Chemical mapping of a 207-nucleotide RNA with DMS and 2A3. For 2A3, 1,209 sequencing reads were counted. The DMS profile rests on 3,216 reads. For 2A3 the reverse transcriptase was SuperScript II with manganese.
[RMDB]
RNA sequence: GGGAACGACUCGAGUAGAGUCGAAAAACAUGCUGGCCAACCCAACCCCACGAUCCUCCAUCGGCAUGAUCAUGAUGUGUUCUCAAAUAUCAGGCCAGUAAAUCGCCAUGCUCGUGCUGGUAAAGGCAACUUAUGCCCAAGUUCGCUUGGGCAUAAAUACUUUUUGGCUAUUCGUAGCCAAAAAGUAAAAAGAAACAACAACAACAAC
Reactivity to DMS in 0.01 (KOAc 150mM, MgCl2 10mM, bicine 150mM(pH8.5), 24C), signal-to-noise 2, nucleotides 027 to 156: a030c020a120u010g010c030u010g010g040c020c010a110a200c070c050c030a130a120c020c000c010c060a100c130g000a180u000c000c010u010c020c040a060u000c040g000g000c010a050u000g000a040u010c020a100u010g000a100u010g000u000g010u020u000c030u010c040a120a070a140u020a080u000c060a100g020g040c010c010a060g010u000a030a060a060u000c020g010c010c010a080u000g020c110u010c020g020u010g000c030u000g000g020u010a020a040a070g020g010c100a000a070c070u000u000a000u000g040c000c010c060a020a030g010u000u020c300g040c000u000u000g020g000g000c000a000u000a000a030a090
Reactivity to 2A3 in 0.01 (KOAc 150mM, MgCl2 10mM, bicine 150mM(pH8.5), 24C), signal-to-noise 2, nucleotides 027 to 156: a000c020a010u050g010c000u000g010g000c020c010a050a080c040c080c030a030a080c040c030c050c020a040c050g060a120u100c010c030u050c040c010a080u030c010g000g020c010a000u000g010a000u000c010a000u030g020a070u060g030u000g000u060u050c040u000c030a050a120a000u280a130u130c060a090g010g010c000c000a000g000u010a000a040a060u160c040g050c040c000a030u040g010c010u030c050g010u010g000c010u010g010g000u040a150a090a020g030g000c020a080a000c020u010u010a000u000g000c000c000c000a000a010g000u020u040c040g010c170u000u020g050g000g010c000a000u010a000a000a000